About this RNA
The record gives the reactivity of an RNA of 207 nucleotides to 2A3 and DMS. For 2A3, 1,679 sequencing reads were counted.
[RMDB]
RNA sequence: GGGAACGACUCGAGUAGAGUCGAAAAUAACUGAGAUUUAAAUGGAAUUGGUUUAAACAUCUGCUAACAUGCAAUGGGAAUAGCACAUAUUUCUUUCUAUCUUGCUGGGCAUACUGAGCUCAUGAUUUUUGCUUUUCCAGGUCACUUUUGGCUGUAAGUCAGUGCUAAAUUUCGAUUUAGCACUGACAAAAGAAACAACAACAACAAC
Reactivity to 2A3 in 0.01 (KOAc 150mM, MgCl2 10mM, bicine 150mM(pH8.5), 24C), signal-to-noise 4, nucleotides 027 to 156: u050a020a030c070u080g040a030g050a100u090u160u220a060a100a080u110g040g010a050a040u100u090g040g010u090u090u200a080a150a030c040a040u040c050u130g000c030u110a110a050c070a130u120g040c040a040a120u060g000g010g050a060a050u090a100g040c030a020c040a090u120a090u050u090u020c000u060u160u000c020u040a090u050c030u020u090g030c030u070g000g010g030c030a050u110a180c110u130g050a010g020c010u000c030a030u090g070a090u020u090u110u060u050g040c030u040u030u030u020c000c030a050g040g000u070c010a010c090u040u110u100u040g030g000c000u040g030u090a100a060
Reactivity to DMS in 0.01 (KOAc 150mM, MgCl2 10mM, bicine 150mM(pH8.5), 24C), signal-to-noise 1, nucleotides 027 to 156: u010a050a180c070u030g000a070g000a100u000u000u000a030a070a090u000g010g020a080a100u000u000g000g000u000u000u000a050a100a100c010a100u000c050u000g040c010u010a070a120c030a010u010g000c030a070a080u000g020g000g000a060a060u010a070g040c080a050c100a120u010a080u020u000u000c040u000u000u000c050u000a080u000c050u000u000g000c040u020g040g010g020c000a130u000a100c040u000g020a110g000c050u000c030a040u000g000a080u000u000u020u010u000g000c000u000u000u010u000c010c020a100g010g020u000c000a100c190u000u000u000u000g030g010c060u000g000u000a100a210